Annotation: This 170-nucleotide RNA was probed chemically with DMS and 2A3. Reactivities are given for positions 27 through 129. The 2A3 profile rests on 4,937 reads. The reactions ran in a buffer of 150 mM KOAc, 10 mM MgCl2 and 150 mM bicine (pH 8.5), at 24 C.

[RMDB]
RNA sequence: GGGAACGACUCGAGUAGAGUCGAAAAGGACGUUCGUCCUCCUACGGAUGCCCAGGUCGGACCGCGAGGAGGUGGAGAUGCCAUGCCGACCCGAAGAGGAAAGAAGAACUCGGACGCGAACCGUGAGAAGGAGCCGGUUUCGACCGGCUCAAAAGAAACAACAACAACAAC
Reactivity to DMS in 0.01 (KOAc 150mM, MgCl2 10mM, bicine 150mM(pH8.5), 24C), signal-to-noise 4, nucleotides 027 to 129: g040g010a020c000g030u000u000c110g070u010c000c010u060c050c040u030a040c050g040g040a050u050g030c070c030c070a070g000g060u030c050g040g060a140c040c080g010c130g050a070g060g010a040g030g010u000g030g010a110g030a000u030g060c120c100a090u000g040c010c060g030a090c070c110c120g010a100a100g020a030g010g050a020a070a000g050a150a030g050a030a140c080u050c050g020g010a100c080g010c080g030a000a000c100c050g000u050g000a080g010a050a060g030
Reactivity to 2A3 in 0.01 (KOAc 150mM, MgCl2 10mM, bicine 150mM(pH8.5), 24C), signal-to-noise 4, nucleotides 027 to 129: g020g000a030c020g100u060u100c050g030u160c030c000u040c010c020u040a060c050g000g000a070u120g010c020c010c010a010g010g100u040c030g020g000a080c010c010g060c040g040a050g060g000a020g030g030u040g040g010a100g000a030u110g070c090c060a060u110g000c000c030g010a050c000c000c030g000a050a000g020a000g030g050a010a060a040g080a040a000g040a010a010c040u000c050g020g020a000c030g000c020g090a040a020c000c010g060u080g030a040g020a020a080g030